[RMDB]
An RNA of 177 nucleotides, treated with 2A3 and DMS and read out base by base. For DMS, 2,923 sequencing reads were counted.
RNA sequence: GGGAACGACUCGAGUAGAGUCGAAAAGAUAUGGACUGUGGCUUUUGACGGCAAACUUUCGGAAACGAAAGCACUGCCGAUAAGCCACGUCCUAAGUCAAACUAAGAGUGGUUCGCCACUCUUAGAACAACUAGCGAAUGUUCGCAUUCGCUAGUUGAAAAGAAACAACAACAACAAC
Reactivity to 2A3 in 0.01 (KOAc 150mM, MgCl2 10mM, bicine 150mM(pH8.5), 24C), signal-to-noise 3, nucleotides 027 to 126: g020a010u060a020u130g000g020a010c150u290g070u000g000g020c030u100u060u160u300g300a190c070g000g000c030a070a090a050c010u030u010u000c000g020g030a040a060a070c000g000a020a000a010g000c020a050c210u030g000c010c010g050a040u030a000a000g000c000c000a000c000g000u000c010c000u000a020a010g020u010c030a040a080a120c000u000a010a020g000a010g000u020g100g030u040u210c300g120c030c000a000c010u000c000u000u000a000g000a010a010
Reactivity to DMS in 0.01 (KOAc 150mM, MgCl2 10mM, bicine 150mM(pH8.5), 24C), signal-to-noise 3, nucleotides 027 to 126: g000a040u000a300u000g000g000a000c010u030g090u000g000g000c010u000u000u010u000g020a200c100g010g000c000a030a090a150c010u000u000u010c000g010g000a070a070a150c010g000a010a000a020g010c110a060c300u000g000c000c000g010a060u000a010a010g020c000c000a000c000g010u000c010c000u000a010a070g000u000c020a120a080a300c010u000a000a000g010a010g040u000g000g020u000u020c280g000c020c000a000c000u000c000u000u000a000g000a070a110
The data come from the RNA Mapping Database (RMDB), library TTRDEL. Conditions: 150 mM KOAc, 10 mM MgCl2 and 150 mM bicine (pH 8.5), 24 C. 2A3 adducts were read by reverse transcription with SuperScript II with manganese.